Source: RMDB library M2RFPK, as collected in RNAgym. An RNA of 207 nucleotides, treated with DMS and 2A3 and read out base by base. Values are in units of 0.01, from 0 to 300, in steps of 10.
[RMDB]
RNA sequence: GGGAACGACUCGAGUAGAGUCGAAAAAGGCACUUCGCAAUGUGUGCUCAAACAUUGCUAAUUCAAACACGCUUCACAAUGUGCGACAAAGAAACAUUGUUAUAAGAGCUAAUGUUUUAACAUUGGCAAAACCGAGUUAGCUUCGGCUAACUCGGAACCAACAACAAACCUUCGGGUUUGUUGUUGGAAAAGAAACAACAACAACAAC
Reactivity to DMS in 0.01 (KOAc 150mM, MgCl2 10mM, bicine 150mM(pH8.5), 24C), signal-to-noise 1, nucleotides 027 to 156: a080g010g030c150a070c060u000u010c080g040c040a080a060u010g020u020g000u000g000c020u000c090a110a100a000c020a060u000u000g040c030u000a100a150u010u040c080a090a140a190c110a060c110g000c030u000u000c060a060c040a020a030u000g020u000g010c000g000a200c090a020a060a090g000a250a150a040c010a020u020u020g000u000u010a150u010a080a130g040a130g030c000u020a070a040u000g010u000u000u010u000a050a070c020a020u000u030g040g000c000a000a040a170a100c010c010g020a020g060u000u000a010g000c020u060u010c300g000g000c020u000a020a020c000u000c000g000g020a010a020
Reactivity to 2A3 in 0.01 (KOAc 150mM, MgCl2 10mM, bicine 150mM(pH8.5), 24C), signal-to-noise 7, nucleotides 027 to 156: a000g180g010c010a000c000u010u000c010g010c000a010a010u010g000u000g010u020g020c110u110c200a050a050a000c000a000u000u000g010c030u110a110a190u170u170c100a050a100a050c080a030c070g000c010u010u010c010a000c000a000a010u010g000u010g010c010g040a060c150a080a160a040g080a020a050a000c000a000u000u000g020u050u070a150u050a100a090g040a010g020c000u010a010a000u010g030u010u120u060u240a120a020c000a000u000u000g030g000c050a060a010a030a010c000c000g000a000g000u000u000a010g000c010u020u020c230g050g000c000u000a000a000c000u010c000g000g000a000a010

The RNA was probed in 150 mM KOAc, 10 mM MgCl2 and 150 mM bicine (pH 8.5) at 24 C.